Source information:
An RNA of 177 nucleotides, treated with DMS and 2A3 and read out base by base. The data come from the RNA Mapping Database (RMDB), library M2PK50. DMS adducts were read by reverse transcription with MarathonRT. For DMS, 735 sequencing reads were counted.
[RMDB]
RNA sequence: GGGAACGACUCGAGUAGAGUCGAAAAGAGCAUGUCUUCGGACAUGCUCAAACGAGAAACGGCAAAUAAGCCGUUCCCAGGCGAUCGUACGCCAUACUCGAAAAAGUAUAGUCUUCGGACUAUACAAUCUAGUUGUUGAGUUCGCUCAACAACUAGAAAAAGAAACAACAACAACAAC
Reactivity to DMS in 0.01 (KOAc 150mM, MgCl2 10mM, bicine 150mM(pH8.5), 24C), signal-to-noise 1, nucleotides 027 to 126: g010a000g010c000a000u010g000u000c000u000u010c270g000g000a010c000a000u000g000c000u020c010a000a070a120c030g010a020g000a150a090a010c000g000g020c000a070a230a100u040a170a120g000c020c000g030u000u000c000c000c000a170g000g000c020g000a100u000c300g000u000a250c040g020c000c050a080u010a040c010u000c000g010a060a080a060a200a070g000u000a000u000a000g020u010c000u000u040c200g000g020a020c000u000a000u000a000c030a110a070
Reactivity to 2A3 in 0.01 (KOAc 150mM, MgCl2 10mM, bicine 150mM(pH8.5), 24C), signal-to-noise 1, nucleotides 027 to 126: g010a000g020c010a000u000g010u030c010u050u060c210g030g020a010c020a000u010g000c000u010c000a010a000a010c000g000a000g040a020a100a010c020g010g000c070a080a140a300u170a280a070g000c000c000g010u000u000c020c020c000a030g000g000c020g030a070u170c100g120u180a070c050g000c000c000a010u070a080c020u040c010g070a090a070a030a060a010g010u010a000u010a010g000u000c000u020u060c260g050g000a000c000u000a000u000a000c000a000a020